[RMDB]
RNA sequence: GGGAACGACUCGAGUAGAGUCGAAAAUGUCACUUGUGAUGUUGCUUGCGUAAUAGUAUUUGGUUCCAUCGUUGGGUUCGAUGUUUGAUUAAUGAUUGCUUUUGCUGCAGUAACUGCGCUGUCGUACUGUGGAUAUGGCGUUCGCGCCAUAUCCACAAAAAGAAACAACAACAACAAC
Reactivity to 2A3 in 0.01 (KOAc 150mM, MgCl2 10mM, bicine 150mM(pH8.5), 24C), signal-to-noise 1, nucleotides 027 to 126: u110g030u030c010a020c020u090u030g060u050g080a130u060g000u120u070g000c080u090u080g080c000g060u070a030a010u030a180g090u020a140u030u080u030g050g000u030u030c030c000a100u020c060g030u010u080g210g000g020u080u080c000g000a060u030g150u040u100u170g150a070u050u120a140a030u120g060a050u000u100g040c020u100u150u080u040g020c070u100g000c000a030g000u030a050a000c030u040g050c050g000c030u040g000u020c070g070u050a050c040
Reactivity to DMS in 0.01 (KOAc 150mM, MgCl2 10mM, bicine 150mM(pH8.5), 24C), signal-to-noise 1, nucleotides 027 to 126: u010g020u020c010a070c140u010u010g030u000g010a130u010g000u000u010g020c010u000u010g030c060g010u000a070a150u000a070g020u000a040u010u010u000g020g030u000u000c090c020a040u000c060g010u000u000g020g040g010u010u000c050g030a070u010g010u010u020u000g010a090u010u000a090a070u000g000a100u010u000g010c010u000u000u000u000g010c030u000g010c030a030g010u000a040a100c100u000g000c060g050c030u000g000u010c060g050u000a100c140